RNA sequence: GGGAACGACUCGAGUAGAGUCGAAAACUAUACAGACGACCUGUAAAUGUUUUUCGAGUAUCUUCAUUCUUCCCUCAUCCUACUGAUGUUUUAGAGAGGAAGAUACUCAGCAAAACAUUUACUGGUUUCACCAAUGAGAUUUCGAUCUCAUUGGUGAAAAAGAAACAACAACAACAAC
Reactivity to 2A3 in 0.01 (KOAc 150mM, MgCl2 10mM, bicine 150mM(pH8.5), 24C), signal-to-noise 8, nucleotides 027 to 126: c020u030a030u100a240c070a050g190a070c040g020a000c020c000u010g000u000a000a000a000u000g000u000u010u000u000u040c020g000a000g000u000a000u000c000u010u010c020a190u080u020c030u070u110c040c000c000u010c000a010u010c010c080u160a250c100u210g010a020u010g080u020u050u100u170a050g010a000g000a000g020g010a010a000g000a000u000a000c000u000c010a010g000c020a000a010a000a000c000a000u000u010u000a000c000u020g010g000u010u010
Reactivity to DMS in 0.01 (KOAc 150mM, MgCl2 10mM, bicine 150mM(pH8.5), 24C), signal-to-noise 1, nucleotides 027 to 126: c000u000a170u020a130c160a070g010a170c240g010a040c000c010u000g000u000a000a000a000u000g000u000u000u000u000u000c160g000a000g040u010a010u000c000u010u010c010a010u060u000c000u010u000c170c290c050u000c000a000u010c040c290u000a160c240u000g000a050u000g010u020u000u020u020a210g030a000g000a000g040g000a000a010g010a000u000a000c020u000c000a010g070c110a000a000a010a050c000a000u000u000u000a000c000u000g010g030u000u000
Chemical mapping of a 177-nucleotide RNA with 2A3 and DMS. For DMS, 1,365 sequencing reads were counted. The reactions ran in a buffer of 150 mM KOAc, 10 mM MgCl2 and 150 mM bicine (pH 8.5), at 24 C. Source: RMDB libraries RFM100 and RFMREP, as collected in RNAgym. DMS adducts were read by reverse transcription with MarathonRT.